[RMDB]
RNA sequence: GGGAACGACUCGAGUAGAGUCGAAAAAACGAGCGCAACCCCUAUCGUUAGUUGCCCACGGUUCGGCCGGGUACUCUAGCGAGACUGCCGGCGUUAAGCCGGAGGAAGGUGGGGAUGACGUCAAGUCCGAAGCGACUAGAUUCGUCUAGUCGCUUCGAAAAGAAACAACAACAACAAC
Reactivity to 2A3 in 0.01 (KOAc 150mM, MgCl2 10mM, bicine 150mM(pH8.5), 24C), signal-to-noise 5, nucleotides 027 to 126: a000a000c110g010a040g000c030g000c020a070a130c000c000c000c010u040a020u010c010g010u000u000a010g010u010u010g020c010c040c070a090c040g020g030u060u120c170g060g000c010c000g000g010g010u030a040c060u020c000u030a000g000c000g000a000g010a000c020u020g010c000c000g020g020c010g060u120u170a080a040g000c000c030g000g000a000g000g000a010a000g020g000u120g020g000g000g010a020u060g050a040c000g020u100c060a080a020g060u020c020
Reactivity to DMS in 0.01 (KOAc 150mM, MgCl2 10mM, bicine 150mM(pH8.5), 24C), signal-to-noise 3, nucleotides 027 to 126: a120a050c060g000a180g000c020g000c010a080a060c000c000c010c000u040a030u000c000g010u000u000a000g010u010u000g000c030c000c140a300c050g000g000u000u040c170g010g020c000c000g000g000g010u000a010c210u010c000u000a010g010c000g010a030g000a040c000u000g000c030c000g000g000c000g000u010u020a130a250g000c000c000g010g000a010g000g000a050a020g000g010u010g000g000g000g000a050u010g000a190c010g020u020c030a110a190g000u020c090